Source: RMDB library OK2TST, as collected in RNAgym.
Chemical mapping of a 177-nucleotide RNA with 2A3 and DMS.
The reactions ran in a buffer of 150 mM KOAc, 10 mM MgCl2 and 150 mM bicine (pH 8.5), at 24 C.
For 2A3 the reverse transcriptase was SuperScript II with manganese.
[RMDB]
RNA sequence: GGGAACGACUCGAGUAGAGUCGAAAACAUCCAGGUUUCGUCAAACAGUUACUUUUGGCACUGCAUUGAUUAAAUCGCCACUUGUGGAUGGACGCAUAAUUUUCGGUUUGAUGUGAUAUGCCAGACAUACUUGCGCUAUGUUCGCAUAGCGCAAGUAAAAAGAAACAACAACAACAAC
Reactivity to 2A3 in 0.01 (KOAc 150mM, MgCl2 10mM, bicine 150mM(pH8.5), 24C), signal-to-noise 1, nucleotides 027 to 126: c010a030u030c010c010a020g030g080u000u030u050c040g040u030c040a010a060a060c020a040g010u140u090a060c010u080u150u210u210g020g000c080a010c040u060g000c070a070u000u060g030a010u020u060a000a040a090u080c030g040c090c020a070c050u110u100g010u060g160g010a080u080g000g050a010c050g000c050a020u080a090a180u140u090u090u060c060g040g000u080u060u090g030a020u050g020u020g070a050u070a000u080g030c030c010a020g050a060c010a060
Reactivity to DMS in 0.01 (KOAc 150mM, MgCl2 10mM, bicine 150mM(pH8.5), 24C), signal-to-noise 2, nucleotides 027 to 126: c070a060u000c000c010a230g040g000u000u000u000c070g010u000c010a030a050a200c020a030g000u000u020a050c070u000u000u010u010g050g040c110a020c030u000g020c090a060u000u010g000a050u000u010a020a020a040u000c050g030c090c080a090c120u000u000g020u000g030g020a090u010g010g010a090c130g000c050a080u000a040a110u000u000u000u010c050g000g000u000u010u000g010a070u000g010u010g010a120u000a070u010g020c010c040a140g000a080c190a130
Values cover nucleotides 27 to 126.